[RMDB]
RNA sequence: GGGAACGACUCGAGUAGAGUCGAAAAAAGCCGCAACGCGCACGACACAGGCAGUGUUCCGGCAUAGCCUUCGAUAGCGCGCAACAACUCGCCAACCUGGGUUGGAUCCGUGAUUGCCGCGUAAUGCCAUUGUGAGUUGGUUCGCCAACUCACAAUGAAAAGAAACAACAACAACAAC
Reactivity to DMS in 0.01 (KOAc 150mM, MgCl2 10mM, bicine 150mM(pH8.5), 24C), signal-to-noise 4, nucleotides 027 to 126: a070a090g000c020c010g000c180a040a070c040g040c020g020c010a080c040g000a120c300a090c210a090g010g020c020a180g060u010g010u000u000c140c050g020g000c010a030u000a080g000c010c030u000u000c120g000a110u000a110g000c010g000c030g000c030a070a040c060a070a020c030u000c030g010c030c000a030a040c050c060u000g020g020g010u000u000g010g010a130u010c120c130g000u000g000a080u010u000g000c030c050g010c030g010u010a080a070u010g020c090
Reactivity to 2A3 in 0.01 (KOAc 150mM, MgCl2 10mM, bicine 150mM(pH8.5), 24C), signal-to-noise 3, nucleotides 027 to 126: a000a020g040c010c010g000c010a030a030c030g010c000g000c030a020c120g190a040c070a030c020a170g060g060c060a090g030u000g000u090u030c060c010g020g010c010a030u060a040g020c020c000u070u100c080g120a120u090a180g000c000g000c010g000c010a000a020c000a010a010c000u020c050g010c020c010a030a040c020c060u300g300g030g020u010u010g020g050a040u060c030c050g000u050g050a220u010u050g050c080c040g000c010g010u050a070a050u160g050c030